[RMDB]
RNA sequence: GGGAACGACUCGAGUAGAGUCGAAAAAACCUUGAAGAAAGGGACAACUAUUGGUAGGCAGUUUGGGUGGGGCGCCACGCCUCUAAGAAGAAAACAGAGGUCUCCAAUGGUUAGCUCAGAAGGGUCAUGCUUCAAAGAUUUUCGAAUCUUUGAAGCAAAAAGAAACAACAACAACAAC
Reactivity to 2A3 in 0.01 (KOAc 150mM, MgCl2 10mM, bicine 150mM(pH8.5), 24C), signal-to-noise 3, nucleotides 027 to 126: a010a020c060c000u050u080g070a150a070g110a080a080a050g000g010g010a000c010a010a000c030u000a010u030u020g030g040u040a060g000g000c030a050g060u000u020u110g160g050g020u090g020g040g030g000c050g000c020c020a070c040g020c000c000u000c020u030a080a050g100a070a070g070a000a130a000a000c050a050g070a050g220g050u020c010u030c000c000a000a000u000g010g010u000u010a020g000c010u000c020a080g080a100a070g030g000g010u020c040a040
Reactivity to DMS in 0.01 (KOAc 150mM, MgCl2 10mM, bicine 150mM(pH8.5), 24C), signal-to-noise 4, nucleotides 027 to 126: a060a020c000c010u000u000g020a120a160g000a100a130a040g000g000g000a070c040a010a000c010u000a020u010u000g000g000u020a030g010g000c010a050g010u010u010u010g000g000g030u000g000g000g000g030c010g010c190c130a080c110g020c000c000u000c000u030a070a110g030a170a150g010a120a030a070a030c050a080g000a050g010g010u000c020u000c020c010a000a020u000g010g000u000u000a040g000c000u000c010a040g000a130a070g000g000g000u000c100a110